[RMDB]
RNA sequence: GGGAACGACUCGAGUAGAGUCGAAAAAAAGAUAUGGAAUUACAGAGUAAACCUAGGCGAAGAACAUCGAUCGGAAACGAUCGAUGGGAGCCUAGGGAUUUACGACGAAGUAAUUCCUAAGUCAAAAGAUACUAUCAGGGUUCGCCCUGAUAGUAUCAAAAGAAACAACAACAACAAC
Reactivity to DMS in 0.01 (KOAc 150mM, MgCl2 10mM, bicine 150mM(pH8.5), 24C), signal-to-noise 3, nucleotides 027 to 126: a060a060a090g010a010u010a300u020g000g010a000a000u000u000a000c010a080g000a300g020u000a010a040a090c010c000u000a000g000g010c020g010a140a150g000a140a100c000a000u000c000g030a000u000c000g010g000a080a040a100c000g020a000u000c000g000a000u000g010g030g000a110g010c000c000u000a010g000g000g010a010u000u020u020a030c150g000a090c190g010a150a200g000u000a000a020u000u000c000c000u000a020a070g000u010c020a070a030a190a180
Reactivity to 2A3 in 0.01 (KOAc 150mM, MgCl2 10mM, bicine 150mM(pH8.5), 24C), signal-to-noise 2, nucleotides 027 to 126: a060a010a020g040a040u070a020u120g000g000a000a020u010u000a010c020a040g120a020g140u030a040a100a060c010c000u010a000g030g000c080g300a300a010g050a080a040c000a000u000c010g010a000u000c000g000g020a030a020a000c000g000a010u000c000g010a000u000g010g010g000a010g000c000c000u000a010g010g000g000a000u010u000u040a000c030g030a010c050g050a100a030g000u010a010a000u000u000c000c010u010a130a010g050u020c040a000a000a190a190